Chemical mapping of a 177-nucleotide RNA with DMS and 2A3. The reactions ran in a buffer of 150 mM KOAc, 10 mM MgCl2 and 150 mM bicine (pH 8.5), at 24 C. DMS adducts were read by reverse transcription with MarathonRT. The 2A3 profile rests on 4,759 reads.
RNA sequence: GGGAACGACUCGAGUAGAGUCGAAAAACGACACAAUGACCAACACAAAAACGGCGCUCAUGCUCGCCGGCGCAAUCGCCCUGGGCGCUGCCCUCGCCGGCUGCGAUGCCGACAACUACGGGCACCACGCGUAAUACAUUUUCGAAUGUAUUACGCGAAAAGAAACAACAACAACAAC
Reactivity to DMS in 0.01 (KOAc 150mM, MgCl2 10mM, bicine 150mM(pH8.5), 24C), signal-to-noise 4, nucleotides 027 to 126: a100c080g000a110c110a070c100a060a070u010g010a080c050c020a070a050c080a080c140a100a010a070a090a120c100g020g010c020g030c160u010c080a070u010g020c040u010c200g020c020c010g040g000c020g000c190a100a060u000c090g010c030c040c050u010g010g000g020c010g010c180u010g010c010c010c020u000c060g000c020c010g000g000c010u020g000c070g010a050u000g020c000c010g010a040c070a080a080c110u010a070c140g020g020g000c030a050c110c080a150
Reactivity to 2A3 in 0.01 (KOAc 150mM, MgCl2 10mM, bicine 150mM(pH8.5), 24C), signal-to-noise 3, nucleotides 027 to 126: a000c080g060a030c060a000c020a190a140u200g050a090c030c030a080a060c060a030c050a120a100a020a080a030c030g020g000c020g000c040u120c140a110u190g020c030u050c060g010c000c000g010g000c010g000c020a040a140u150c070g020c010c010c030u050g000g030g020c260g120c280u220g000c000c010c000u020c000g020c010c000g010g030c000u000g000c020g020a040u120g000c010c000g050a020c020a020a020c010u180a040c060g000g020g010c010a000c020c020a030